[RMDB]
RNA sequence: GGGAACGACUCGAGUAGAGUCGAAAACUUCGCAACUUCGGUUGCGAAGAAUGGCAGCUCGUCCCGGCGCUCGGUUCGCCGGGUUAUAAAACAUAACACAUCACUGGCUACCAUUCGUGGUAGCCAACUACCUGCUUCAUUUCGAUGAAGCAGGUAGAAAAGAAACAACAACAACAAC
Reactivity to 2A3 in 0.01 (KOAc 150mM, MgCl2 10mM, bicine 150mM(pH8.5), 24C), signal-to-noise 2, nucleotides 027 to 126: c000u010u010c000g000c000a020a010c030u030u090c200g200g000u000u000g020c000g000a010a010g010a010a010u030g060g010c030a010g000c070u030c070g110u090c040c000c000g030g000c000g000c030u220c120g210g060u210u050c000g020c000c000g000g050g000u000u010a040u010a000a040a000a030c050a060u150a120a020c050a000c000a120u120c040a010c260u020g000g010c000u000a010c000c010a020u020u040c160g020u010g020g010u010a000g000c000c000a000a000
Reactivity to DMS in 0.01 (KOAc 150mM, MgCl2 10mM, bicine 150mM(pH8.5), 24C), signal-to-noise 2, nucleotides 027 to 126: c000u000u000c000g020c000a010a010c000u010u000c190g020g010u000u000g030c000g020a000a020g020a010a070u000g010g030c220a070g000c020u000c060g040u020c010c000c000g000g010c000g000c060u010c240g050g040u020u000c020g010c000c000g030g010g010u000u000a010u010a050a070a080a130c150a090u000a050a050c090a050c140a100u010c100a120c170u000g020g000c000u000a000c000c000a050u000u020c230g010u000g000g010u000a000g000c000c000a000a020
An RNA of 177 nucleotides, treated with 2A3 and DMS and read out base by base. Reactivities are given for positions 27 through 126. It was measured as part of the RMDB library M2PK50. For 2A3, 1,810 sequencing reads were counted.